Conditions: 150 mM KOAc, 10 mM MgCl2 and 150 mM bicine (pH 8.5), 24 C. The record gives the reactivity of an RNA of 177 nucleotides to DMS and 2A3. DMS adducts were read by reverse transcription with MarathonRT. 2A3 adducts were read by reverse transcription with SuperScript II with manganese. Values cover nucleotides 27 to 126.

RNA sequence: GGGAACGACUCGAGUAGAGUCGAAAAGAAUUUGUUCAUGUAUUGAGUACUUGGUAUACUUUACAUUGGAUAUACUAUGUAGAGUCGCGUCGACUUUUUAAGUACUCUGAACAUGUUCGUCAUUACAGGGUUCCGAUGUCUUCGGAUAUCGGAACCCAAAAGAAACAACAACAACAAC
Reactivity to DMS in 0.01 (KOAc 150mM, MgCl2 10mM, bicine 150mM(pH8.5), 24C), signal-to-noise 1, nucleotides 027 to 126: g010a070a040u020u000u000g010u000u000c000a020u010g000u010a110u000u010g000a010g000u000a000c000u040u010g010g040u000a010u030a010c010u010u000u020a000c040a070u000u000g000g000a200u010a040u070a100c000u000a050u040g040u000a000g000a000g010u000c070g000c150g000u060c080g000a050c050u000u020u000u020u010a020a080g010u000a030c000u000c020u000g000a040a000c000a000u000g000u000u000c000g010u000c160a170u020u010a100c220a050
Reactivity to 2A3 in 0.01 (KOAc 150mM, MgCl2 10mM, bicine 150mM(pH8.5), 24C), signal-to-noise 5, nucleotides 027 to 126: g040a000a020u140u120u120g010u000u000c020a030u090g100u180a160u150u140g000a000g010u010a000c010u030u070g010g000u120a060u030a070c000u040u030u020a020c000a020u060u120g040g060a050u060a000u030a230c010u020a020u030g020u020a000g000a000g020u030c010g030c080g150u240c060g080a150c030u100u130u030u080u080a000a000g000u000a000c000u010c000u010g000a030a010c000a010u000g000u010u000c070g040u030c040a040u030u190a070c070a090